[RMDB]
RNA sequence: GGGAACGACUCGAGUAGAGUCGAAAAGUAGGAAACUGCCACGCUGUCUUCCAAGUGGCCGCGCCACCCUGUGCCUCCAGCAGUGCUGGGUGCACACUCCUGUGGCCACAUCCUCGCCAGCCUUCGGUAGAGGCAUGGAUUUCGAUCCAUGCCUCUAAAAAGAAACAACAACAACAAC
Reactivity to 2A3 in 0.01 (KOAc 150mM, MgCl2 10mM, bicine 150mM(pH8.5), 24C), signal-to-noise 1, nucleotides 027 to 126: g110u120a040g080g070a130a160a030c040u100g020c010c030a070c080g050c040u020g020u110c040u040u030c020c020a120a000g000u010g000g000c020c000g010c000g030c020c050a090c000c030c050u020g000u020g000c000c010u000c030c000a000g000c010a060g110u050g240c020u010g000g030g030u030g000c020a010c000a010c040u060c050c020u050g000u040g010g000c000c000a010c000a010u000c000c010u030c000g060c010c000a030g000c020c010u080u100c000g060g020
Reactivity to DMS in 0.01 (KOAc 150mM, MgCl2 10mM, bicine 150mM(pH8.5), 24C), signal-to-noise 1, nucleotides 027 to 126: g010u020a070g030g000a080a050a130c100u020g010c020c020a080c090g030c030u000g000u000c040u000u000c070c090a140a150g030u010g000g010c000c050g040c040g000c100c050a060c030c100c090u000g020u000g000c010c000u000c000c000a000g010c010a180g010u010g010c010u000g000g040g000u000g000c030a010c030a050c090u010c050c070u010g050u000g000g030c000c010a050c030a100u000c020c010u000c000g000c060c030a080g000c030c110u010u050c060g010g000

Source: RMDB library OK2TST, as collected in RNAgym. Chemical mapping of a 177-nucleotide RNA with 2A3 and DMS. For DMS, 1,379 sequencing reads were counted. The reactions ran in a buffer of 150 mM KOAc, 10 mM MgCl2 and 150 mM bicine (pH 8.5), at 24 C. Values cover nucleotides 27 to 126.